Source: RMDB library OK3TST, as collected in RNAgym. An RNA of 207 nucleotides, treated with DMS and 2A3 and read out base by base. Reactivities are rounded to 0.1 and cut off at 0 and 3. The RNA was probed in 150 mM KOAc, 10 mM MgCl2 and 150 mM bicine (pH 8.5) at 24 C. The DMS profile rests on 1,642 reads.
RNA sequence: GGGAACGACUCGAGUAGAGUCGAAAAGAAUCAUGCCACAAUAAACAUACUGAUUUAUAAUCUUUGGGUAUAUACUCAGUAAUGGGAUUGCUGGGUCAAAUGGUAUUUCUGGUUCUAGAUCCUUGAGGAAUCACCACACUGUCCUCCACAAUGGUGGGAUUAGACGUCCUUUCGAGGACGUCUAAUCAAAAGAAACAACAACAACAAC
Reactivity to DMS in 0.01 (KOAc 150mM, MgCl2 10mM, bicine 150mM(pH8.5), 24C), signal-to-noise 1, nucleotides 027 to 156: g020a140a100u000c030a070u000g030c070c070a080c030a110a130u010a070a080a120c010a090u010a080c010u010g000a020u020u010u010a070u000a090a130u000c030u020u000u000g030g000g000u000a040u000a050u000a080c200u000c010a010g000u000a050a070u010g050g000g020a300u000u000g000c010u010g030g030g040u000c020a010a170a100u000g010g010u000a050u010u000u000c000u040g050g010u000u010c060u020a050g010a070u000c010c030u040u010g010a090g020g000a070a050u010c080a030c040c000a010c050a010c090u000g030u000c010c040u000c070c070a080c050a030a030u000g010g010u000g030g040
Reactivity to 2A3 in 0.01 (KOAc 150mM, MgCl2 10mM, bicine 150mM(pH8.5), 24C), signal-to-noise 3, nucleotides 027 to 156: g070a020a040u100c040a030u070g040c010c000a010c020a060a090u150a100a090a020c020a020u090a030c040u030g050a060u110u090u060a120u070a160a120u050c020u060u130u130g070g000g050u020a030u000a010u000a080c020u000c000a000g020u020a040a120u100g020g000g090a040u020u050g040c070u060g010g000g010u010c000a030a110a150u060g020g010u050a030u010u140u030c060u050g010g000u010u020c000u040a020g010a090u000c020c000u000u050g020a030g030g050a010a010u110c030a010c020c020a020c000a020c060u040g050u060c010c020u040c020c000a070c020a070a300u050g030g000u000g010g030